[RMDB]
RNA sequence: GGGAACGACUCGAGUAGAGUCGAAAAAGACUUGUAUUCGUACAAGUCUACAGAUAUUUCGCUAGCACACGAUCACACCUAGCGUUCUCAAUAACGAUCGAACAACGUGUCAAUUCGUUGACACGAACAAUACCUUCGCCUUCGGGCGAAGGUAUUGAAAAGAAACAACAACAACAAC
Reactivity to DMS in 0.01 (KOAc 150mM, MgCl2 10mM, bicine 150mM(pH8.5), 24C), signal-to-noise 2, nucleotides 027 to 126: a000g000a010c000u000u000g000u000a010u000u030c120g070u000a010c000a010a030g000u000c000u000a050c230a200g010a180u000a100u000u020u010c030g010c000u020a020g000c290a160c180a150c080g000a020u000c040a070c230a130c220c010u000a020g000c000g000u000u010c020u000c000a130a030u000a040a050c240g000a010u000c000g020a210a180c240a100a180c010g000u000g010u000c000a010a050u000u020c170g020u000u000g000a010c000a000c000g010a050a130
Reactivity to 2A3 in 0.01 (KOAc 150mM, MgCl2 10mM, bicine 150mM(pH8.5), 24C), signal-to-noise 2, nucleotides 027 to 126: a000g000a010c000u000u000g000u010a010u040u090c240g030u030a010c000a000a010g000u000c000u000a000c010a030g170a030u060a180u180u040u000c010g010c030u020a000g000c050a040c020a010c130g020a030u000c010a050c020a050c050c000u000a000g020c010g010u010u000c000u000c000a020a040u130a060a010c050g020a020u040c010g030a070a030c050a020a060c030g000u000g020u000c010a020a040u050u090c210g090u060u010g000a000c000a000c020g000a010a010
Record summary: Structure probing data (DMS and 2A3) for a 177-nucleotide construct. For 2A3, 3,085 sequencing reads were counted. 2A3 adducts were read by reverse transcription with SuperScript II with manganese. The data come from the RNA Mapping Database (RMDB), library M2PK50. The reactions ran in a buffer of 150 mM KOAc, 10 mM MgCl2 and 150 mM bicine (pH 8.5), at 24 C. The DMS profile rests on 940 reads.